The record gives the reactivity of an RNA of 177 nucleotides to DMS and 2A3. The reactions ran in a buffer of 150 mM KOAc, 10 mM MgCl2 and 150 mM bicine (pH 8.5), at 24 C. Source: RMDB library TTRDEL, as collected in RNAgym. For 2A3 the reverse transcriptase was SuperScript II with manganese.
[RMDB]
RNA sequence: GGGAACGACUCGAGUAGAGUCGAAAAGAUAUGGAUUGGUCACGUGCACGUUGAAAUCGGAAACGAUGGAGUGCCGUGAGCCAAUCCUAAGUCAAAACGCUAAUACGUGUUCGCACGUAUUAGCGAACGAAGUUACGGGGUUCGCCCCGUAACUUCGAAAAGAAACAACAACAACAAC
Reactivity to DMS in 0.01 (KOAc 150mM, MgCl2 10mM, bicine 150mM(pH8.5), 24C), signal-to-noise 1, nucleotides 027 to 126: g000a030u010a300u000g000g000a000u000u000g000g010u000c000a020c010g010u000g060c000a000c030g000u000u040g020a070a100a010u000c000g010g010a150a110a150c050g000a030u000g000g000a120g010u000g000c000c000g000u000g010a020g090c000c000a020a000u000c000c000u040a010a120g020u010c050a100a090a040a150c050g010c000u000a000a000u000a010c000g030u000g020u000u000c300g050c000a000c020g010u000a000u000u000a000g000c000g010a000a040
Reactivity to 2A3 in 0.01 (KOAc 150mM, MgCl2 10mM, bicine 150mM(pH8.5), 24C), signal-to-noise 1, nucleotides 027 to 126: g010a010u110a040u200g000g020a000u000u020g020g030u020c000a000c060g160u300g050c000a010c020g160u300u090g100a060a050a000u020c000g000g100a070a140a050c010g020a000u030g000g030a060g010u010g000c000c000g010u000g000a000g010c010c000a000a010u000c000c000u000a030a000g050u030c020a000a000a070a160c020g030c010u010a000a000u010a010c020g020u000g030u070u070c300g000c130a000c000g000u000a020u010u000a010g000c010g030a010a010